[RMDB]
Chemical mapping of a 207-nucleotide RNA with 2A3. The data come from the RNA Mapping Database (RMDB), library OK3TST. The 2A3 profile rests on 1,255 reads. The reactions ran in a buffer of 150 mM KOAc, 10 mM MgCl2 and 150 mM bicine (pH 8.5), at 24 C. 2A3 adducts were read by reverse transcription with SuperScript II with manganese.
RNA sequence: GGGAACGACUCGAGUAGAGUCGAAAAACAUCGGCCACACGAUCGAAGACCUGAUCUUCUCGCUGACCAACAUCCGCCCCGGCGCGAUCGGAGGUGUGCUCGGUGGUGGGUCGAUCGAAGAGACCAUCAAGCGCAUCGUCGAUGCGAUCGUCUCGGGUCUCCGUCUAGGGUUCGCCCUAGACGGAGAAAAAGAAACAACAACAACAAC
Reactivity to 2A3 in 0.01 (KOAc 150mM, MgCl2 10mM, bicine 150mM(pH8.5), 24C), signal-to-noise 2, nucleotides 027 to 156: a010c050a010u050c040g030g030c010c000a110c030a000c030g070a070u090c020g000a020a000g060a090c030c100u140g070a230u010c000u050u010c030u000c030g050c060u050g020a070c010c030a120a040c030a210u000c010c030g020c040c010c030c010g030g030c020g000c000g060a020u020c010g000g000a000g030g000u010g000u000g000c000u000c010g000g000u010g000g000u070g010g110g060u030c010g010a100u160c060g060a190a070g030a030g030a070c000c000a000u010c020a020a020g000c000g000c010a010u000c010g230u080c050g020a030u110g080c000g000a060u040c000g030u000c030u010c020g050g000g020